[RMDB]
RNA sequence: GGGAACGACUCGAGUAGAGUCGAAAAGCCGGAGCUGCUGCGCUGGAUCGAUGUGGAGAACAUCAAACGGUUCCCCGGCAUCUUCGCCGCGGGCGAGCCGGUGGUGGCGACGGAGAAGAUCCACGGAGCGAGGUAAUGGUUUCGACCAUUACCUCGCAAAAGAAACAACAACAACAAC
Reactivity to 2A3 in 0.01 (KOAc 150mM, MgCl2 10mM, bicine 150mM(pH8.5), 24C), signal-to-noise 1, nucleotides 027 to 126: g080c010c060g030g010a010g020c050u010g000c020u020g040c090g070c180u200g070g030a120u100c120g030a030u020g060u060g060g100a300g070a200a020c000a000u040c020a000a110a090c030g000g000u000u000c020c030c000c000g010g000c000a030u060c120u200u130c140g020c000c000g030c090g050g030g010c100g010a000g000c020c000g010g000u010g000g010u020g020g000c020g000a010c000g040g030a090g020a070a030g030a050u050c040c000a060c140g030g030a080
Reactivity to DMS in 0.01 (KOAc 150mM, MgCl2 10mM, bicine 150mM(pH8.5), 24C), signal-to-noise 2, nucleotides 027 to 126: g000c000c010g000g000a240g000c020u000g040c010u000g000c020g000c150u010g000g010a080u000c110g000a090u010g030u010g010g020a170g000a120a010c010a000u000c040a020a090a200c040g030g040u000u000c000c000c000c030g010g010c030a100u000c150u020u000c180g000c000c010g000c150g040g020g000c090g030a070g020c020c040g000g030u020g010g010u000g000g000c000g010a170c020g010g000a080g000a110a050g030a080u010c040c000a160c110g010g030a210

The data come from the RNA Mapping Database (RMDB), library OK2TST. Structure probing data (2A3 and DMS) for a 177-nucleotide construct. For DMS the reverse transcriptase was MarathonRT. The RNA was probed in 150 mM KOAc, 10 mM MgCl2 and 150 mM bicine (pH 8.5) at 24 C. For 2A3 the reverse transcriptase was SuperScript II with manganese.